[RMDB]
RNA sequence: GGGAACGACUCGAGUAGAGUCGAAAAAAGUGAUUCGUCACUUAGAUGACCUUUGUGUCCAUCACCUGAGGUACGGGACGUAUAGACCCAUUGGGUCUGCAAACCGUACUACCCACCAGGGAUGGACACUCUGGUGAGUAAGAGGGUUCGCCCUCAACAAUGCUUACCUGUUCGCAGGUAAGCAUUGAAAAGAAACAACAACAACAAC
Reactivity to 2A3 in 0.01 (KOAc 150mM, MgCl2 10mM, bicine 150mM(pH8.5), 24C), signal-to-noise 5, nucleotides 027 to 156: a000a000g040u030g010a040u080u210c270g040u020c100a010c040u050u030a080g100a300u240g080a020c000c000u000u010u030g000u000g010u000c000c010a020u010c020a190c110c000u010g010a020g000g000u000a000c000g010g000g010a020c080g030u020a160u090a180g000a010c010c010c050a160u290u300g000g000g000u020c000u000g000c030a180a120a060c000c000g000u010a000c000u020a010c050c040c020a050c010c010a020g000g020g000a000u000g000g000a000c000a000c010u000c010u000g020g010u030g010a050g070u110a240a050g000a010g030g050g010u060u100c210g110c030c000c010u000c000a010a000
Reactivity to DMS in 0.01 (KOAc 150mM, MgCl2 10mM, bicine 150mM(pH8.5), 24C), signal-to-noise 3, nucleotides 027 to 156: a050a030g040u000g000a040u000u020c230g040u010c010a020c000u000u000a090g030a200u000g010a080c010c010u000u010u030g000u000g000u000c010c030a040u000c010a090c030c000u000g000a160g000g000u010a020c020g010g000g020a190c300g020u000a130u000a050g020a010c000c010c020a300u000u010g060g070g010u000c000u000g000c040a070a130a180c020c000g010u000a030c020u000a030c010c010c020a300c100c030a030g000g010g010a060u000g020g010a060c020a010c030u000c010u000g010g010u000g000a140g000u000a080a130g020a010g000g000g000u000u000c040g020c010c000c000u000c010a020a050